[RMDB]
Source information: Chemical mapping of a 177-nucleotide RNA with DMS and 2A3. For 2A3, 1,728 sequencing reads were counted. The data come from the RNA Mapping Database (RMDB), library RFMREP.

RNA sequence: GGGAACGACUCGAGUAGAGUCGAAAACACAUACCAGCGGCCAUCCGGCUCGCGGGACACGAUCACCAUCGUCGGAUUCAGCGUUGCGAGGGUUUCGUCGUCCCAGGACCACACGAACUCAAGCGGCGUAUUGUUGCAAGUUCGCUUGCAACAAUACAAAAGAAACAACAACAACAAC
Reactivity to DMS in 0.01 (KOAc 150mM, MgCl2 10mM, bicine 150mM(pH8.5), 24C), signal-to-noise 2, nucleotides 027 to 126: c170a120c190a140u000a130c080c020a130g020c030g010g000c010c030a140u010c140c160g010g000c030u010c080g020c080g000g000g000a060c070a030c040g030a030u000c120a040c050c030a070u000c010g000u000c040g020g000a120u000u020c180a130g020c020g010u010u010g030c000g000a200g000g010g020u000u000u000c020g000u010c140g010u010c000c040c060a070g000g000a060c010c050a100c110a110c070g010a030a040c030u000c020a030a160g010c000g000g000c020
Reactivity to 2A3 in 0.01 (KOAc 150mM, MgCl2 10mM, bicine 150mM(pH8.5), 24C), signal-to-noise 2, nucleotides 027 to 126: c030a000c010a060u120a100c020c030a000g010c000g020g000c020c000a110u150c070c090g030g020c070u050c050g000c060g000g000g000a000c020a000c020g000a060u050c050a040c090c020a100u040c020g070u010c040g090g060a080u190u160c100a070g120c020g080u090u160g000c010g000a030g000g030g000u040u050u030c000g000u010c060g000u000c000c030c000a010g040g020a020c040c000a020c010a000c080g040a140a030c010u000c050a040a010g020c020g070g000c010
Conditions: 150 mM KOAc, 10 mM MgCl2 and 150 mM bicine (pH 8.5), 24 C. Values are in units of 0.01, from 0 to 300, in steps of 10.